[RMDB]
RNA sequence: GGGAACGACUCGAGUAGAGUCGAAAAGGAGCUCGGCAAGCUCUUAAUCGUAGGUAGAGCUUGCGUUCGCUCUACCUUACCACCGGAGCGAACUGUAGGGUCGGUGGUAUCGUGAGUCUACAGUUAGGCCACGAUACGAUAUUGCUCUAACCGAGCACUACGCCAUUUAUUUCGAUAAAUGGCGUAGAAAAGAAACAACAACAACAAC
Reactivity to DMS in 0.01 (KOAc 150mM, MgCl2 10mM, bicine 150mM(pH8.5), 24C), signal-to-noise 1, nucleotides 027 to 156: g000g010a120g030c000u000c010g020g020c050a120a150g000c000u000c010u010u000a090a070u000c030g040u000a030g000g030u000a010g030a040g000c010u000u000g000c070g020u010u000c100g030c000u020c000u000a020c000c010u000u000a070c090c040a050c050c010g000g030a040g010c010g000a060a140c050u000g010u010a130g010g030g000u000c040g030g010u000g030g000u000a010u000c000g010u010g020a210g040u010c000u000a050c100a270g000u000u010a020g020g000c010c000a030c000g000a010u010a020c000g020a060u010a180u000u000g010c000u000c000u000a160a080c070c040g000a070g060c000a120
Reactivity to 2A3 in 0.01 (KOAc 150mM, MgCl2 10mM, bicine 150mM(pH8.5), 24C), signal-to-noise 3, nucleotides 027 to 156: g120g020a070g000c000u000c000g030g000c050a050a020g000c000u010c040u030u050a060a040u040c030g030u020a020g010g040u030a000g010a020g030c050u120u170g110c100g080u120u020c020g000c000u000c000u000a000c010c000u000u020a010c000c000a010c010c000g020g010a010g020c030g040a090a100c110u180g100u180a050g050g000g000u050c030g010g010u030g010g000u000a000u000c000g010u010g050a140g010u010c000u030a060c080a300g120u300u090a010g010g000c000c000a000c000g000a000u010a020c000g000a000u030a080u040u070g000c000u000c010u020a060a030c010c010g000a010g000c000a010
Structure probing data (DMS and 2A3) for a 207-nucleotide construct. DMS adducts were read by reverse transcription with MarathonRT. The data come from the RNA Mapping Database (RMDB), library OK3TST.